Source information: An RNA of 177 nucleotides, treated with 2A3 and DMS and read out base by base. Source: RMDB library OK2TRN, as collected in RNAgym. The 2A3 profile rests on 3,501 reads. For DMS the reverse transcriptase was MarathonRT. The DMS profile rests on 7,321 reads.
[RMDB]
RNA sequence: GGGAACGACUCGAGUAGAGUCGAAAAAUUCAGGCGAGAACAGGGCAACGCACACCUACUAGCCAAGAUACAAAGCACUUAAUACAGGGAGGAGUCAUGUGGGCAGAGCCCAGUGGGUCUGGGUUCCUAAAUGGCAUUGAUUCGUCAAUGCCAUUUAAAAAGAAACAACAACAACAAC
Reactivity to 2A3 in 0.01 (KOAc 150mM, MgCl2 10mM, bicine 150mM(pH8.5), 24C), signal-to-noise 3, nucleotides 027 to 126: a000u040u030c020a010g030g000c000g060a160g040a190a030c030a080g030g000g000c020a080a000c040g020c030a040c020a000c020c000u040a030c030u060a050g040c020c010a050a010g070a070u160a040c080a040a150a070g060c060a040c090u110u130a120a040u150a170c040a030g070g020g000a070g020g020a010g050u050c060a060u080g000u060g030g010g010c040a030g020a010g040c000c000c000a010g020u060g010g060g000u010c000u010g020g000g000u000u000c010c000
Reactivity to DMS in 0.01 (KOAc 150mM, MgCl2 10mM, bicine 150mM(pH8.5), 24C), signal-to-noise 7, nucleotides 027 to 126: a060u000u000c060a060g000g020c050g020a160g020a130a050c090a100g000g010g010c060a060a170c160g010c040a060c060a040c030c060u000a080c060u010a080g010c040c040a070a060g000a120u000a080c140a050a090a120g010c080a080c120u010u000a060a090u010a100c140a070g000g000g010a090g010g000a090g010u000c100a040u010g020u000g000g000g010c070a080g010a300g010c010c010c000a030g020u000g010g010g000u000c040u000g000g010g010u000u010c020c050